[RMDB]
RNA sequence: GGGAACGACUCGAGUAGAGUCGAAAAGCUGAAUGACAAAGAUGAGUUGACAUCAACAAAGGAACUCCAUGAUGCACGCCCUCUCGGAGAUCCCCAGUCGACAAACAGAAGGACACUCGAAAUACGAGAUAAUCAAUAUGUUCGCAUAUUGAUUAUCAAAAGAAACAACAACAACAAC
Reactivity to DMS in 0.01 (KOAc 150mM, MgCl2 10mM, bicine 150mM(pH8.5), 24C), signal-to-noise 9, nucleotides 027 to 126: g020c050u000g010a090a080u010g000a090c100a070a110a110g010a050u000g000a130g020u000u000g010a120c060a070u010c050a060a080c100a070a120a150g010g010a050a070c030u000c020c030a090u000g010a080u010g010c070a060c110g000c040c020c060u010c040u000c080g000g000a070g000a080u000c020c010c020c060a120g010u000c050g010a040c110a050a070a100c090a060g010a080a060g010g010a080c070a050c030u010c040g000a040a060a090u000a080c150g000a140
Reactivity to 2A3 in 0.01 (KOAc 150mM, MgCl2 10mM, bicine 150mM(pH8.5), 24C), signal-to-noise 7, nucleotides 027 to 126: g030c030u050g050a080a060u120g020a060c050a050a150a030g090a130u100g010a020g080u030u040g050a050c020a050u070c050a050a060c020a070a100a010g030g000a030a020c010u000c010c000a030u090g020a030u090g040c050a010c090g010c020c000c000u000c000u020c050g020g000a040g000a060u010c010c000c000c000a020g030u030c020g020a020c030a040a120a000c010a040g090a060a030g050g010a010c010a010c050u030c010g060a050a060a030u200a050c050g020a010